[RMDB]
RNA sequence: GGGAACGACUCGAGUAGAGUCGAAAACACCGUGCCUGCCAUGGCCACGCUGCUCGGACGCGCAAGUUGGUGGCCCGGACACCCUUGGCAGCGGUGCGCACCCGAAGAAGGCCAGAUGUCAGCCCGGAGCACCUUCCUUAUUCGUAAGGAAGGUGCUAAAAGAAACAACAACAACAAC
Reactivity to 2A3 in 0.01 (KOAc 150mM, MgCl2 10mM, bicine 150mM(pH8.5), 24C), signal-to-noise 1, nucleotides 027 to 126: c050a000c000c000g040u070g060c020c030u050g010c000c000a100u120g010g000c020c010a030c070g120c030u050g030c010u000c040g060g060a130c090g050c020g000c120a050a090g090u080u150g240g020u010g030g010c000c020c000g040g020a100c060a140c060c020c000u040u020g070g000c020a030g030c020g020g020u010g030c020g010c000a090c000c000c000g020a090a060g080a060a020g060g020c040c020a070g010a120u090g000u070c030a000g050c000c040c020g020g020
Reactivity to DMS in 0.01 (KOAc 150mM, MgCl2 10mM, bicine 150mM(pH8.5), 24C), signal-to-noise 3, nucleotides 027 to 126: c030a050c010c010g030u010g010c130c020u000g000c000c020a090u010g020g000c070c020a040c030g010c030u010g010c060u000c070g000g000a110c090g020c150g010c030a060a070g000u000u010g040g030u000g020g010c030c020c130g000g000a100c080a060c070c050c040u000u000g030g010c020a080g020c050g000g030u020g030c050g000c180a140c010c010c010g020a090a090g030a070a060g000g010c010c040a100g010a140u000g020u010c030a080g030c010c040c030g000g000
This 177-nucleotide RNA was probed chemically with 2A3 and DMS.
It was measured as part of the RMDB library OK2TRN.
Values cover nucleotides 27 to 126.
For DMS, 2,143 sequencing reads were counted.
Conditions: 150 mM KOAc, 10 mM MgCl2 and 150 mM bicine (pH 8.5), 24 C.